[RMDB]
RNA sequence: GGGAACGACUCGAGUAGAGUCGAAAAGCAGUAGUGCAGAUGGAAAUUGUUUUUAUUAAAUCAAAGGUUUCCGUUGAAUGUGUUUAUACAUACAUAUGUAUUGUGGGUUACUUUUGAGCUGUAAUGCCGUAUUACUGCAUUUCGAUGCAGUAAUACGAAAAGAAACAACAACAACAAC
Reactivity to DMS in 0.01 (KOAc 150mM, MgCl2 10mM, bicine 150mM(pH8.5), 24C), signal-to-noise 4, nucleotides 027 to 126: g000c050a030g010u030a070g020u000g000c050a130g010a070u010g000g000a040a070a100u020u000g010u030u000u010u000u020a050u070u020a030a080a120u020c070a030a040a100g010g010u000u000u000c010c000g000u010u010g000a090a040u010g020u010g010u010u020u030a070u020a060c100a010u010a100c100a090u030a050u010g010u030a040u010u030g020u020g000g020g010u000u010a050c010u000u000u000u000g010a070g000c020u010g010u040a070a070u020g000c020
Reactivity to 2A3 in 0.01 (KOAc 150mM, MgCl2 10mM, bicine 150mM(pH8.5), 24C), signal-to-noise 7, nucleotides 027 to 126: g060c050a020g030u300a000g080u040g110c030a010g010a060u080g040g060a020a050a070u090u070g140u090u050u040u070u080a220u050u230a060a100a050u070c050a030a010a030g010g030u000u000u030c020c010g040u050u080g090a140a070u070g020u010g070u090u170u170a110u070a030c060a010u170a050c010a030u210a060u160g060u110a070u060u160g050u090g070g040g030u040u040a050c020u020u030u030u020g050a040g010c010u030g070u170a060a040u230g030c020